RNA sequence: GGGAACGACUCGAGUAGAGUCGAAAAAUCCGAGAGUUAUUCGCUCCUCUCGAUAUUGAGCGUCAAAAAGAAAAGAGAAAAAGAAAAAGGACCGCCAAAGAAAGAGAAAACGGCGGACCAGAAAUAACCCAUGGUAAUAUUUCGAUAUUACCAUGGGAAAAGAAACAACAACAACAAC
Reactivity to DMS in 0.01 (KOAc 150mM, MgCl2 10mM, bicine 150mM(pH8.5), 24C), signal-to-noise 1, nucleotides 027 to 126: a140u000c050c030g000a060g000a010g010u030u030a040u010u000c010g020c020u000c050c000u010c010u000c000g000a230u080a040u070u030g020a080g110c030g060u010c110a020a070a080a040a200g020a110a020a070a070g040a100g000a030a120a050a130a100g000a040a010a070a200a100g030g010a070c040c000g000c010c010a030a060a150g000a210a090a120g010a170g060a100a030a170a160c250g010g030c000g000g000a000c020c010a100g000a080a090a020u000a100a070
Reactivity to 2A3 in 0.01 (KOAc 150mM, MgCl2 10mM, bicine 150mM(pH8.5), 24C), signal-to-noise 1, nucleotides 027 to 126: a000u020c020c010g000a010g000a000g000u060u070a120u100u100c010g000c000u010c020c000u000c020u000c050g060a000u030a040u220u130g010a000g000c000g010u020c050a020a020a130a110a080g110a040a150a020a010g170a000g070a050a060a000a050a030g060a040a230a020a010a000g010g000a000c000c000g020c030c010a090a160a000g120a010a100a010g050a010g000a000a260a000a000c030g000g000c000g000g000a000c000c000a000g090a010a050a010u010a030a020